[RMDB]
RNA sequence: GGGAACGACUCGAGUAGAGUCGAAAAAAGCCUCUGUUCGAAAUCAUCGGGAGUGAUCCAGAUGACGGUCCUGCCAUGAGACCGCAACGAGAGCAUGUCGAAUCGAAUGGACUCGGGGAGUCGGCAGUGUAGUGGGGAUGGUUCGCCAUCCCCACAAUCAUAAGGGUAGGUUCGCCUACCCUUAUGAAAAAGAAACAACAACAACAAC
Reactivity to 2A3 in 0.01 (KOAc 150mM, MgCl2 10mM, bicine 150mM(pH8.5), 24C), signal-to-noise 1, nucleotides 027 to 156: a000a000g010c010c010u020c050u060g050u000u050c050g040a110a050a140u010c000a010u000c020g040g000g030a040g000u170g050a110u000c000c020a000g030a090u030g090a110c030g000g020u020c020c000u030g200c070c010a130u060g020a050g040a090c000c050g100c010a020a040c050g000a010g010a000g170c060a030u130g060u060c050g030a050a100u030c010g010a020a030u050g060g070a040c010u000c080g060g000g000g000a010g030u050c030g040g040c090a050g050u100g030u300a160g000u000g020g020g010g000a000u000g000g000u020u010c110g020c040c000a000u000c000c000c000c010a000c000a010a000
Reactivity to DMS in 0.01 (KOAc 150mM, MgCl2 10mM, bicine 150mM(pH8.5), 24C), signal-to-noise 2, nucleotides 027 to 156: a100a080g010c050c020u000c000u010g010u020u000c040g010a090a110a090u000c010a020u000c010g010g100g010a040g010u010g020a230u000c000c000a070g010a040u000g020a070c020g000g020u000c010c010u000g090c060c180a080u000g010a050g020a040c010c030g030c060a070a050c120g000a240g000a100g010c020a140u010g010u000c020g040a070a160u000c050g020a070a090u000g000g000a080c080u000c000g050g000g030g020a140g030u000c040g010g050c040a150g020u020g010u000a070g040u000g010g020g010g010a060u000g020g030u000u000c100g010c050c000a060u000c000c000c020c000a000c010a000a130
Structure probing data (2A3 and DMS) for a 207-nucleotide construct. Reactivities are given for positions 27 through 156. 2A3 adducts were read by reverse transcription with SuperScript II with manganese. Conditions: 150 mM KOAc, 10 mM MgCl2 and 150 mM bicine (pH 8.5), 24 C. The data come from the RNA Mapping Database (RMDB), library M2RFPK.